An RNA of 207 nucleotides, treated with 2A3 and DMS and read out base by base. It was measured as part of the RMDB library OK3TST. The RNA was probed in 150 mM KOAc, 10 mM MgCl2 and 150 mM bicine (pH 8.5) at 24 C. For 2A3, 2,182 sequencing reads were counted. For 2A3 the reverse transcriptase was SuperScript II with manganese.
RNA sequence: GGGAACGACUCGAGUAGAGUCGAAAACCUGCUUCCUGCGAGUGGAGGAAGGAGUUAUCCCAAGUGUGACUGAUGAAGUUAUGCAGAGGGGAGUGCUUAGCAAGCACCCUUCCACAGGCAAAGGCCAGCUGCUGCUCACCUGUUGCGAAGCAGGCAGCUGGGGUUUAUGUUUCGACAUAAACCCCAGAAAAGAAACAACAACAACAAC
Reactivity to 2A3 in 0.01 (KOAc 150mM, MgCl2 10mM, bicine 150mM(pH8.5), 24C), signal-to-noise 3, nucleotides 027 to 156: c000c010u000g000c000u020u000c000c000u030g020c020g030a030g030u050g050g100a130g020g010a020a010g030g010a050g030u090u080a150u130c000c010c020a080a090g000u000g000u010g020a010c010u010g010a070u150g060a120a010g000u000u000a010u030g000c020a030g040a130g180g010g010g030a050g000u020g010c010u060u070a090g070c120a080a000g000c000a010c000c000c000u000u000c010c010a040c040a060g010g020c030a110a130a080g120g060c030c020a050g060c040u150g000c040u090g000c020u030c040a040c010c020u070g040u070u050g030c120g010a010a010g000c000a010g010g000c000a020g020
Reactivity to DMS in 0.01 (KOAc 150mM, MgCl2 10mM, bicine 150mM(pH8.5), 24C), signal-to-noise 1, nucleotides 027 to 156: c040c010u000g000c030u010u000c030c000u000g010c040g010a230g120u020g060g040a060g030g030a120a030g010g030a150g000u000u000a090u000c030c010c000a090a300g010u000g030u000g010a050c040u010g010a300u010g040a300a150g020u030u000a060u010g000c050a130g010a230g000g010g000g030a040g000u020g010c020u000u020a250g010c300a300a180g000c010a060c000c000c040u000u000c000c010a080c030a130g030g000c020a050a160a180g010g000c030c040a080g040c040u010g040c040u010g020c030u000c050a040c010c000u000g030u000u000g030c040g010a050a090g000c000a020g000g010c030a040g030